This 177-nucleotide RNA was probed chemically with 2A3 and DMS.
2A3 adducts were read by reverse transcription with SuperScript II with manganese.
The RNA was probed in 150 mM KOAc, 10 mM MgCl2 and 150 mM bicine (pH 8.5) at 24 C.
The data come from the RNA Mapping Database (RMDB), library OK1LIB.
DMS adducts were read by reverse transcription with MarathonRT.
RNA sequence: GGGAACGACUCGAGUAGAGUCGAAAACAGUAAAGGCCUUGUAAUCCGCCGUCUGCCUGUGCUUGCUCUGAAUAAUCAACGCACAGCUUGCUGGCGCUUUCCUUGCAUACAUUUGUGUCAGAGCUGCAAUGCUCCCUAGGUUCGCCUAGGGAGCAUUAAAAGAAACAACAACAACAAC
Reactivity to 2A3 in 0.01 (KOAc 150mM, MgCl2 10mM, bicine 150mM(pH8.5), 24C), signal-to-noise 3, nucleotides 027 to 126: c030a000g020u140a020a190a010g040g020c010c010u060u070g050u060a030a050u000c000c010g000c000c010g040u000c010u030g020c000c000u000g020u040g000c020u020u080g020c010u010c050u130g060a100a110u180a100a050u110c030a060a070c060g000c050a040c000a040g010c010u010u090g020c020u030g000g000c000g000c000u020u070u050c030c000u010u060g100c010a060u040a090c020a080u190u200u090g130u010g030u010c010a030g010a020g100c000u030g000c040
Reactivity to DMS in 0.01 (KOAc 150mM, MgCl2 10mM, bicine 150mM(pH8.5), 24C), signal-to-noise 2, nucleotides 027 to 126: c130a150g050u000a050a060a020g000g020c010c030u000u030g010u010a100a130u000c080c010g010c080c000g000u000c010u030g000c190c000u060g020u000g000c020u010u020g010c060u020c040u000g000a100a070u020a000a090u000c110a070a060c170g040c010a120c070a050g030c020u050u000g000c000u000g040g020c020g010c040u000u000u000c060c010u000u000g060c080a020u040a170c060a080u030u060u020g000u030g010u000c070a020g000a100g010c020u000g000c140